[RMDB]
RNA sequence: GGGAACGACUCGAGUAGAGUCGAAAAUCCAGGACGGGCAUCCCGUGUUGGUUUGGUACAAGGUAUGGGACAAGCCUGCCUCACAGUGGGCCAGACUCCCGGGUACGCCAGAGCAGUUCCGGGGGUCCGUUCGCAUCCGAUUCGUCGGAUGCGAACGAAAAGAAACAACAACAACAAC
Reactivity to DMS in 0.01 (KOAc 150mM, MgCl2 10mM, bicine 150mM(pH8.5), 24C), signal-to-noise 1, nucleotides 027 to 126: u000c010c000a150g000g000a040c050g010g000g010c070a070u010c020c040c020g030u010g000u010u030g010g010u000u020u000g020g000u000a070c160a100a080g020g020u000a030u000g000g040g000a050c100a090a200g010c010c000u000g000c000c000u000c260a110c150a170g010u000g000g000g020c110c150a080g020a030c060u000c020c000c000g000g010g010u000a020c100g010c040c160a150g010a070g050c040a090g020u000u000c260c000g000g000g000g000g000u000c000